[RMDB]
RNA sequence: GGGAACGACUCGAGUAGAGUCGAAAACGAAGGAAAAAGAGUUUGCCGUGCGCACGGUUUAUGGAGGUCUCUUGACGGUGGACUCCACGAAUUGGCUGGUGGAGAUGAUCAGCUCAUCAUUCACCUAAUCGACUUUUAUCUUCGGAUAAAAGUCGAUAAAAGAAACAACAACAACAAC
Reactivity to 2A3 in 0.01 (KOAc 150mM, MgCl2 10mM, bicine 150mM(pH8.5), 24C), signal-to-noise 3, nucleotides 027 to 126: c050g070a000a030g100g080a050a060a020a040a040g090a050g030u020u060u040g030c030c010g060u100g030c040g010c050a070c030g030g050u050u070u050a110u120g040g000a010g050g140u030c020u000c010u060u160g080a050c080g030g010u070g030g040a030c000u000c020c010a040c040g060a080a110u100u100g090g030c090u060g000g020u000g000g000a010g000a010u020g020a020u110c160a060g090c060u000c000a000u000c010a150u000u010c000a000c000c000u030a040
Reactivity to DMS in 0.01 (KOAc 150mM, MgCl2 10mM, bicine 150mM(pH8.5), 24C), signal-to-noise 2, nucleotides 027 to 126: c040g010a140a110g050g000a070a030a080a110a060g000a140g000u020u010u030g000c010c020g010u070g000c140g020c030a080c060g000g020u000u010u080a080u010g030g010a010g000g010u030c010u020c060u010u010g020a100c240g000g000u010g010g000a080c020u000c010c010a020c040g000a060a040u010u010g010g000c120u040g000g030u000g000g010a000g000a030u000g010a010u010c180a110g040c300u010c020a020u000c010a130u000u000c010a020c000c000u010a070